[RMDB]
RNA sequence: GGGAACGACUCGAGUAGAGUCGAAAACAGGCCAAGCUGAGUAAGAAGGGCCGGGUUAAGAAGGGACAUGCUCAUGUCCAACCCCAGCCCAGUGGCUCUCAGGAGCCCAGGGAUCCACAGAGCCCCGUGUUAGGUUUGGGUUCGCCCAAACCUAACAAAAAGAAACAACAACAACAAC
Reactivity to DMS in 0.01 (KOAc 150mM, MgCl2 10mM, bicine 150mM(pH8.5), 24C), signal-to-noise 1, nucleotides 027 to 126: c150a160g010g010c010c040a020a070g000c000u000g000a110g050u000a140a070g020a230a080g000g000g000c010c090g000g020g010u000u030a090a090g000a170a200g000g000g000a030c000a010u000g020c230u000c130a080u000g010u000c000c000a060a070c180c010c000c010a140g010c010c000c000a110g040u010g000g010c040u000c000u000c130a280g010g000a050g000c020c020c110a070g010g000g020a080u000c050c070a080c060a080g000a100g010c000c010c000c080g040
Annotation: Structure probing data (DMS) for a 177-nucleotide construct. The reactions ran in a buffer of 150 mM KOAc, 10 mM MgCl2 and 150 mM bicine (pH 8.5), at 24 C. The data come from the RNA Mapping Database (RMDB), library OK2TRN.